[RMDB]
RNA sequence: GGGAACGACUCGAGUAGAGUCGAAAAUCAAAAGUUUUCAAUGCGAUAUUUACUAGGUGAUCAUCAUUAUAGACAUUACUUUCCAUUGUUCACUGCGAUUACGUCGUUUGCAUCUUUAGCAUGGAUGACAGGUACUACGGUUCGCCGUAGUACCUGUAAAAGAAACAACAACAACAAC
Reactivity to DMS in 0.01 (KOAc 150mM, MgCl2 10mM, bicine 150mM(pH8.5), 24C), signal-to-noise 3, nucleotides 027 to 126: u010c020a060a170a020a100g040u000u000u020u000c010a040a010u010g000c070g000a030u000a010u010u000u000a080c070u010a060g000g000u010g010a130u020c190a120u010c030a030u000u050a100u000a050g010a090c290a050u020u030a060c170u030u000u010c000c010a030u020u000g000u000u000c000a020c000u000g000c300g010a030u020u010a030c190g010u010c010g000u020u020u000g000c030a030u000c000u020u000u000a080g020c240a090u010g000g000a040u000g000
Reactivity to 2A3 in 0.01 (KOAc 150mM, MgCl2 10mM, bicine 150mM(pH8.5), 24C), signal-to-noise 3, nucleotides 027 to 126: u120c030a040a050a010a000g010u000u020u040u020c090a070a060u080g080c090g070a010u030a070u170u210u030a170c110u070a040g040g010u010g130a130u100c030a030u040c010a020u050u190a040u080a170g040a050c040a030u000u090a080c080u030u120u000c000c000a010u010u050g010u020u010c020a000c020u020g000c040g040a030u020u070a060c070g020u030c030g030u100u080u070g040c010a010u010c100u100u070u000a090g070c080a060u160g060g010a040u070g010